[RMDB]
RNA sequence: GGGAACGACUCGAGUAGAGUCGAAAAGAGCAACUUAGGAUUUUAGGCUCCCCGGUGCGGCUCGAACCGCGCCGGGCCAAACCCACAGGGGCUGGCGGUCCUGUGCGGUCAAAAUCUUUCCGCUGGAAUACCUAUCCCAGUUUCGACUGGGAUAGAAUGUAUAUAUUCCUUUCGAGGAAUAUAUACAAAAAGAAACAACAACAACAAC
Reactivity to 2A3 in 0.01 (KOAc 150mM, MgCl2 10mM, bicine 150mM(pH8.5), 24C), signal-to-noise 3, nucleotides 027 to 156: g010a000g000c010a010a150c070u040u050a050g100g080a050u050u030u020u060a050g040g020c000u000c020c000c000c000g000g010u000g000c000g040g010c090u150c300g060a130a060c010c000g000c010g000c000c000g000g000g000c000c000a040a020a010c000c000c000a000c000a000g000g000g000g020c000u000g000g000c000g000g010u010c000c010u010g000u010g010c180g000g000u060c020a020a010a020a050u050c030u120u140u030c010c000g000c020u010g000g020a120a080u110a130c000c000u010a000u000c000c000c000a000g010u020u050u140c150g080a010c010u000g000g000g000a000u000a000g000a000a000
Reactivity to DMS in 0.01 (KOAc 150mM, MgCl2 10mM, bicine 150mM(pH8.5), 24C), signal-to-noise 1, nucleotides 027 to 156: g000a020g000c020a020a040c070u010u000a070g000g000a040u000u000u000u010a240g020g020c010u000c010c000c000c000g030g070u000g020c050g000g000c000u010c260g020a110a100c000c010g020c000g030c020c010g030g080g000c000c040a060a100a090c000c010c030a070c040a060g020g000g000g030c000u020g020g020c060g020g030u000c020c000u000g020u000g030c160g060g010u000c070a030a050a050a040u010c050u000u000u000c040c010g060c000u000g010g020a150a130u000a090c090c020u000a030u000c000c000c000a050g010u000u000u000c250g020a080c020u000g020g020g030a000u000a000g000a040a030
Structure probing data (2A3 and DMS) for a 207-nucleotide construct. The 2A3 profile rests on 2,914 reads. For DMS, 2,796 sequencing reads were counted. Source: RMDB library M2RFPK, as collected in RNAgym. Reactivities are given for positions 27 through 156.